[RMDB]
RNA sequence: GGGAACGACUCGAGUAGAGUCGAAAAACAAUGUUGACAUGGUUGCUGUGGACAGGCAGCAGAAGUUUCGCUGCAUCUUCUUGACAAUCACAAUGUUGACAGAUGCGGGUGUUUACAAAGUCCCAAAGACCAUUCUCGAUUUUCGGAUGGCUAAUGCUAGUCCAUUAAGUUUCGACUUAAUGGACUAAAAAGAAACAACAACAACAAC
Reactivity to DMS in 0.01 (KOAc 150mM, MgCl2 10mM, bicine 150mM(pH8.5), 24C), signal-to-noise 5, nucleotides 027 to 156: a080c050a070a100u000g020u000u010g020a090c050a120u010g030g020u000u000g020c000u010g010u000g020g010a100c140a120g020g020c030a050g020c040a090g020a100a170g020u000u000u000c060g030c020u020g020c000a040u000c020u000u000c020u000u010g000a030c010a040a120u000c200a130c190a150a130u010g010u000u000g020a020c030a020g010a060u000g020c040g020g020g010u000g010u000u000u000a140c060a060a070a140g010u000c050c000c010a080a120a160g010a030c000c000a020u000u000c010u000c020g000a230u000u010u010u000c000g010g000a020u000g020g040c010u000a060a080u000g000c110
Reactivity to 2A3 in 0.01 (KOAc 150mM, MgCl2 10mM, bicine 150mM(pH8.5), 24C), signal-to-noise 6, nucleotides 027 to 156: a000c080a080a090u070g010u050u070g040a040c040a160u080g070g020u060u030g010c010u040g020u080g080g040a060c070a120g180g000c010a010g000c020a020g070a170a020g050u070u130u140c070g010c000u010g010c010a030u020c010u060u030c020u030u070g020a040c010a010a120u120c050a070c060a160a130u080g000u030u010g030a020c050a050g020a020u030g010c010g000g040g010u100g030u030u030u020a060c060a020a100a010g060u040c010c010c000a020a070a070g050a090c010c000a030u090u020c130u100c100g270a270u040u070u230u260c050g020g000a000u010g030g000c020u080a100a020u080g080c060
Structure probing data (DMS and 2A3) for a 207-nucleotide construct. High DMS reactivity at an A or C suggests that its Watson-Crick edge is free. It was measured as part of the RMDB library OK3TST. The 2A3 profile rests on 4,145 reads. The reactions ran in a buffer of 150 mM KOAc, 10 mM MgCl2 and 150 mM bicine (pH 8.5), at 24 C.